[RMDB]
RNA sequence: GGGAACGACUCGAGUAGAGUCGAAAAAAAGGCAAUGGAAACAUUUAACCAUAAUAAUGGUAAUGAUGUUCUCUAUCAGCCUCCAACCGCCUCUGUUACUACAUCAUUUUUACAGUCUGGUAUAGUGAAGAUGGUGUCGCCCACCUCUAAAGUGGAGGUGGCGGAUCAAUUUCGAUUGAUCCGCCACAAAAGAAACAACAACAACAAC
Reactivity to 2A3 in 0.01 (KOAc 150mM, MgCl2 10mM, bicine 150mM(pH8.5), 24C), signal-to-noise 2, nucleotides 027 to 156: a030a030a000g000g000c000a000a020u020g010g060a000a030a030c020a000u050u060u100a050a020c040c000a030u100a200a110u300a150a060u240g000g020u030a140a020u210g020a000u000g000u000u020c060u000c010u140a000u020c040a040g010c000c000u040c020c000a060a040c030c040g050c010c020u090c070u100g060u150u050a100c010u000a000c000a010u020c000a020u000u000u040u020u000a050c030a060g080u020c060u220g030g130u220a190u160a080g010u030g020a000a010g010a030u030g040g000u020g000u000c050g030c010c010c010a020c000c050u090c030u160a120a090a020g050u080g010g020a100g010